[RMDB]
RNA sequence: GGGAACGACUCGAGUAGAGUCGAAAAGUACACUCACGAUCUCGAGUGUACGUGAGAUCGAUCGUACUCGUACUCGAACUCGUACACGAACGUGAUCGAGUUCGAGUUCUCACUCGAGAGUGUUCGUUCGAUCACGUUCACGAACUCUCGAGUACGACUCCUGUGCUGUAUUCGUACAGCACAGGAGAAAAGAAACAACAACAACAAC
Reactivity to 2A3 in 0.01 (KOAc 150mM, MgCl2 10mM, bicine 150mM(pH8.5), 24C), signal-to-noise 8, nucleotides 027 to 156: g010u000a000c020a020c020u040c000a070c100g250a300u110c140u140c170g010a020g000u000g010u000a010c010g010u070g060a090g000a070u050c030g010a010u030c050g060u050a010c010u000c020g020u020a010c000u000c010g000a010a000c020u010c020g060u220a040c010a000c050g260a300a030c180g020u000g010a180u020c010g010a000g010u020u010c000g000a000g000u000u000c000u000c000a030c040u070c050g010a020g010a000g010u040g090u080u020c010g000u060u040c040g000a060u090c080a060c230g050u070u050c040a010c040g010a020a020c020u010c000u000c040g000a000g010u010a010c050g050a040
Reactivity to DMS in 0.01 (KOAc 150mM, MgCl2 10mM, bicine 150mM(pH8.5), 24C), signal-to-noise 2, nucleotides 027 to 156: g020u000a030c010a000c020u010c010a190c080g040a120u010c090u010c040g000a130g020u010g020u000a000c030g040u000g000a160g000a140u000c040g010a130u000c030g010u020a060c060u000c010g030u000a020c040u000c000g020a030a070c010u000c040g000u000a200c030a120c090g010a030a060c150g000u000g010a180u000c030g000a030g020u000u010c000g010a030g010u000u000c010u000c040a110c080u000c080g000a070g000a080g000u000g020u000u000c020g000u010u000c030g000a120u000c130a040c050g010u000u010c030a220c010g000a110a080c010u000c010u010c010g000a040g010u010a030c020g020a160
Description:
Chemical mapping of a 207-nucleotide RNA with 2A3 and DMS. The reactions ran in a buffer of 150 mM KOAc, 10 mM MgCl2 and 150 mM bicine (pH 8.5), at 24 C. It was measured as part of the RMDB library OK3TST.